[RMDB]
RNA sequence: GGGAACGACUCGAGUAGAGUCGAAAACUGUUUCCGCGACCGGAUACACCGGCAGAGGCGGUCAGCACCCCCCAGACGCGACCGGCCUGACGGGGCAGGCGAUCACGGCGCCGGGGUAGCCUCGCUCUAAUUGGCAGUACUUCGGUACUGCCAAUUAAAAAGAAACAACAACAACAAC
Reactivity to DMS in 0.01 (KOAc 150mM, MgCl2 10mM, bicine 150mM(pH8.5), 24C), signal-to-noise 1, nucleotides 027 to 126: c050u000g020u000u000u000c000c030g040c050g010a050c140c090g000g000a120u010a040c050a080c020c000g010g000c000a080g020a130g030g050c080g010g020u010c020a080g030c060a120c020c010c000c000c010c010a090g010a050c060g030c070g000a070c070c030g000g020c030c000u000g000a120c230g000g020g000g000c010a050g010g000c040g000a030u010c030a070c040g000g020c170g000c050c020g030g000g010g030u010a030g030c020c010u010c030g030c080u010c140